[RMDB]
RNA sequence: GGGAACGACUCGAGUAGAGUCGAAAAGGCAGCAAGCACAGUGGCGUGCAGGAUGUGCACUACCUGCGCCAGGCCCUCCUACAGGUGCUGACCGCACUGGCAGAGGCGCAGAAGCUGGGCUUCAGGCCUGGUCAGGGUACUUCGGUACCCUGACCAGAAAAGAAACAACAACAACAAC
Reactivity to DMS in 0.01 (KOAc 150mM, MgCl2 10mM, bicine 150mM(pH8.5), 24C), signal-to-noise 2, nucleotides 027 to 126: g000g000c000a130g030c150a010a000g030c010a040c030a000g020u010g020g030c260g040u020g000c020a040g020g000a060u010g020u010g050c010a020c060u010a100c130c000u000g010c000g030c010c010a220g020g010c000c000c070u010c030c020u000a260c100a110g000g000u000g000c000u000g010a160c300c260g000c010a020c010u000g000g000c080a110g020a070g000g000c090g030c010a050g020a100a180g000c010u000g010g020g000c010u000u000c090a120g010g030c010
Reactivity to 2A3 in 0.01 (KOAc 150mM, MgCl2 10mM, bicine 150mM(pH8.5), 24C), signal-to-noise 1, nucleotides 027 to 126: g000g000c000a050g000c070a090a010g000c000a010c000a050g040u040g080g020c090g000u000g040c020a000g100g120a170u240g070u160g250c060a030c050u030a100c110c000u000g010c020g000c010c020a040g130g000c020c000c000u070c010c010u160a150c070a060g020g020u010g000c040u070g050a140c070c030g010c010a000c000u010g020g040c050a030g030a100g060g020c050g000c070a000g040a040a000g030c000u000g010g040g070c050u030u060c050a000g070g170c010
The record gives the reactivity of an RNA of 177 nucleotides to DMS and 2A3. 2A3 adducts were read by reverse transcription with SuperScript II with manganese. It was measured as part of the RMDB library OK2TRN. The 2A3 profile rests on 921 reads. For DMS the reverse transcriptase was MarathonRT.